The record gives the reactivity of an RNA of 177 nucleotides to DMS and 2A3. The DMS profile rests on 986 reads. DMS adducts were read by reverse transcription with MarathonRT.
RNA sequence: GGGAACGACUCGAGUAGAGUCGAAAAAUAAAGCACGGCAAGCACAUGAAGCACAUGAAGCAGUUCAAGCACAUGAAGCAGUACAAGCACUACAAGCAGUAGAAGCAGCCGAAGCACAUGAAAAAAAGUACAAAGUGUAGUUCGCUACACUUUGUACAAAAGAAACAACAACAACAAC
Reactivity to DMS in 0.01 (KOAc 150mM, MgCl2 10mM, bicine 150mM(pH8.5), 24C), signal-to-noise 2, nucleotides 027 to 126: a050u010a010a100a110g030c040a100c100g010g000c070a100a080g030c010a150c040a070u000g020a030a100g010c040a040c040a050u030g000a090a050g010c050a030g000u000u000c110a070a120g000c010a060c080a050u000g010a060a040g020c010a030g000u010a030c110a100a070g040c000a040c020u000a010c090a080a070g010c020a040g000u000a050g000a090a020g000c070a080g010c010c040g010a040a090g010c000a030c060a080u080g000a000a010a070a020a000a020a200
Reactivity to 2A3 in 0.01 (KOAc 150mM, MgCl2 10mM, bicine 150mM(pH8.5), 24C), signal-to-noise 1, nucleotides 027 to 126: a030u100a030a090a000g010c020a020c040g000g020c000a020a110g000c030a100c010a070u100g000a090a030g040c010a010c010a100u040g060a040a020g010c020a000g010u140u090c090a010a050g000c000a020c000a080u070g030a060a010g020c010a010g030u060a030c010a090a030g020c010a010c040u070a010c050a170a030g060c030a010g030u070a000g010a110a010g030c020a020g030c010c000g010a010a000g010c010a030c000a050u100g130a120a060a000a000a000a020a000